[RMDB]
RNA sequence: GGGAACGACUCGAGUAGAGUCGAAAAACAUGCUGUUACAGAGGUUUUCUCAAAAACAUUACUUAGCCAAACUAAAGAUGAUGGUCUUACAAACCAACACCUAAAGGAGGAGAUACUGAGUACUGCACAUAGUGAGUUUUGGUUAUCGCAUGAGAGGCUCAUUCUCCAAGUUCGCUUGGAGAAUGAGAAAAGAAACAACAACAACAAC
Reactivity to DMS in 0.01 (KOAc 150mM, MgCl2 10mM, bicine 150mM(pH8.5), 24C), signal-to-noise 1, nucleotides 027 to 156: a110c060a120u010g010c010u000g050u000u000a180c040a110g030a120g030g010u000u010u010u000c030u140c040a080a070a050a060a050c030a060u000u010a070c040u010u000a030g020c040c080a130a040a080c030u010a030a170a140g000a070u030g000a140u010g030g030u000c000u000u010a160c150a040a070a020c020c000a050a080c000a010c010c000u000a030a150a090g010g010a100g020g050a160g030a100u010a070c100u000g040a150g030u000a050c050u010g000c040a060c050a060u010a060g020u000g020a080g000u000u000u000u010g050g000u000u020a050u010c070g050c100a070u000g000a120g020a070g000g020
Reactivity to 2A3 in 0.01 (KOAc 150mM, MgCl2 10mM, bicine 150mM(pH8.5), 24C), signal-to-noise 4, nucleotides 027 to 156: a000c020a020u030g030c030u070g020u170u100a030c050a040g060a100g080g030u100u040u130u040c010u000c010a100a110a030a030a030c020a060u120u140a060c030u040u040a020g020c020c040a110a150a070c050u110a120a060a070g060a060u070g020a030u080g020g000u030c030u060u110a020c060a030a030a000c000c010a040a030c010a030c040c020u080a120a080a050g060g010a030g050g000a030g020a010u110a080c020u030g020a000g050u030a050c010u030g080c050a020c010a100u100a040g060u020g060a020g020u040u030u070u090g050g000u090u060a090u100c040g010c050a020u090g030a050g020a030g160g020

The record gives the reactivity of an RNA of 207 nucleotides to DMS and 2A3. For DMS, 1,840 sequencing reads were counted. The reactions ran in a buffer of 150 mM KOAc, 10 mM MgCl2 and 150 mM bicine (pH 8.5), at 24 C. Values cover nucleotides 27 to 156. For DMS the reverse transcriptase was MarathonRT. It was measured as part of the RMDB library OK3TST.